[RMDB]
RNA sequence: GGGAACGACUCGAGUAGAGUCGAAAAGAUAUGGAAGGUCUUGGAUUUAGUGGAAGUUGGGAAUUCUACGGGUCGGAAACGACCCUGUAGUUAUCCCAACUUCCACUUGUCAGACCUUCCUAAGUCACUUAGUUCUGAUCUUCGGAUCAGAACUAAGAAAAGAAACAACAACAACAAC
Reactivity to DMS in 0.01 (KOAc 150mM, MgCl2 10mM, bicine 150mM(pH8.5), 24C), signal-to-noise 1, nucleotides 027 to 126: g010a090u000a300u010g000g030a020a010g000g000u000c020u020u030g050g020a030u010u020u000a000g060u000g010g020a030a000g020u010u010g000g000g030a010a300u000u000c000u020a000c010g000g010g010u000c010g000g000a080a130a140c070g000a030c000c000c000u010g030u000a000g010u000u000a070u000c010c000c010a000a020c000u000u010c000c010a000c000u000u000g020u000c030a060g000a000c010c010u010u010c000c000u020a020a080g000u010c030a300